RNA sequence: GGGAACGACUCGAGUAGAGUCGAAAAGGAUACUUCUACCUGUAGAAAAAAAGGUUGGCAAACUUGGUGGCAUGGUGAGGACAAAGGGCAUUUUGAAAGAACCAGUGACUGAGGUCAGAGUGGGGAGCUGGUGUUAGCUGUGGGAUUCACUGCAGCACCACCUAUUAAAUUUCGAUUUAAUAGGUGGAAAAGAAACAACAACAACAAC
Reactivity to DMS in 0.01 (KOAc 150mM, MgCl2 10mM, bicine 150mM(pH8.5), 24C), signal-to-noise 1, nucleotides 027 to 156: g010g060a150u000a050c050u000u000c030u000a080c020c030u000g020u000a130g000a000a000a080a110a120a050a050g020g030u000u010g020g030c010a040a050a080c050u000u000g000g040u010g000g000c030a040u010g000g000u010g030a050g000g000a080c080a030a080a120g000g020g010c050a100u000u000u010u000g010a050a080a100g000a120a060c020c000a080g010u000g000a060c050u000g000a110g020g010u010c030a050g010a100g000u020g010g010g030g030a130g020c010u020g000g000u000g020u010u010a090g010c010u000g050u000g030g020g010a300u000u000c080a040c000u010g020c000a030g040c010a250
Reactivity to 2A3 in 0.01 (KOAc 150mM, MgCl2 10mM, bicine 150mM(pH8.5), 24C), signal-to-noise 3, nucleotides 027 to 156: g030g010a070u050a120c020u070u060c010u060a030c020c030u040g070u150a110g110a100a120a000a040a030a020a000g040g000u060u030g050g040c020a050a080a050c070u090u070g060g000u050g040g020c040a020u030g000g030u040g030a050g020g030a040c050a040a060a010g000g010g010c020a020u010u040u060u170g140a120a090a030g030a020a030c010c020a000g010u010g100a040c030u010g010a030g040g040u050c080a000g020a010g070u050g010g010g000g010a010g000c030u030g000g040u010g020u080u090a020g020c000u000g010u020g030g000g010a040u130u190c070a040c090u030g000c020a010g000c010a020